The record gives the reactivity of an RNA of 177 nucleotides to 2A3 and DMS.
Source: RMDB library OK1LIB, as collected in RNAgym.
For DMS the reverse transcriptase was MarathonRT.
For 2A3 the reverse transcriptase was SuperScript II with manganese.
The RNA was probed in 150 mM KOAc, 10 mM MgCl2 and 150 mM bicine (pH 8.5) at 24 C.
[RMDB]
RNA sequence: GGGAACGACUCGAGUAGAGUCGAAAAGAAGUUUGUGGACAAUGUUGUCAGUUUAAGCAAGGACCCCAAUUACCCCAGUGUUUUUGCGCAAGAGAUUUCUAAGCUAACUGGCAAAAACUACAGCGGUCAUAUUACUAGCGUUCGCGCUAGUAAUAUGAAAAGAAACAACAACAACAAC
Reactivity to 2A3 in 0.01 (KOAc 150mM, MgCl2 10mM, bicine 150mM(pH8.5), 24C), signal-to-noise 6, nucleotides 027 to 126: g140a070a010g030u090u160u120g050u040g020g040a060c080a180a140u140g020u170u020g020u070c030a030g000u010u050u110a070a000g000c000a010a020g020g010a050c010c000c010c010a040a080u120u090a080c010c010c020c040a040g010u000g040u070u020u030u040u070g020c060g020c040a090a010g020a010g010a130u070u210u080c040u160a130a040g010c010u020a030a030c010u000g010g010c000a000a010a000a030a000c050u090a010c020a010g040c030g020g010u020
Reactivity to DMS in 0.01 (KOAc 150mM, MgCl2 10mM, bicine 150mM(pH8.5), 24C), signal-to-noise 3, nucleotides 027 to 126: g000a120a080g000u000u020u000g010u020g010g010a080c130a090a070u020g010u020u020g000u000c020a010g020u010u010u000a110a090g030c030a040a260g000g010a090c040c000c000c040a060a100u030u010a100c010c010c010c070a110g020u000g030u000u000u000u000u000g020c070g000c050a120a060g000a060g000a070u020u010u030c070u000a050a230g000c010u010a050a050c020u030g020g040c000a020a020a010a040a050c030u000a040c040a010g020c160g000g000u010